[RMDB]
RNA sequence: GGGAACGACUCGAGUAGAGUCGAAAAAAAGAUAUGGACGAACUGGAGCUGAAACGCCGUGAUGACCUUAGUCGGAAACGACUAAGCAAGCGGUGGAACCAGCUAUGAAGGUUCGUCCUAAGUCAAACCAUUGGAGACGGUUCGCCGUCUCCAAUGGAAAAGAAACAACAACAACAAC
Reactivity to DMS in 0.01 (KOAc 150mM, MgCl2 10mM, bicine 150mM(pH8.5), 24C), signal-to-noise 1, nucleotides 027 to 126: a120a080a090g000a030u010a300u000g000g040a000c000g000a080a000c000u000g000g000a050g040c000u000g030a010a000a030c010g000c010c000g000u010g000a030u010g000a180c300c010u000u000a000g010u000c000g010g070a220a090a270c050g000a000c000u000a000a040g090c000a100a150g000c000g010g000u000g000g000a110a190c020c000a010g040c010u000a100u030g010a150a300g000g000u010u010c040g000u000c000c000u010a010a190g040u000c040a160a130a160
Chemical mapping of a 177-nucleotide RNA with DMS. Values cover nucleotides 27 to 126. The DMS profile rests on 613 reads. The data come from the RNA Mapping Database (RMDB), library TTRDES. Conditions: 150 mM KOAc, 10 mM MgCl2 and 150 mM bicine (pH 8.5), 24 C.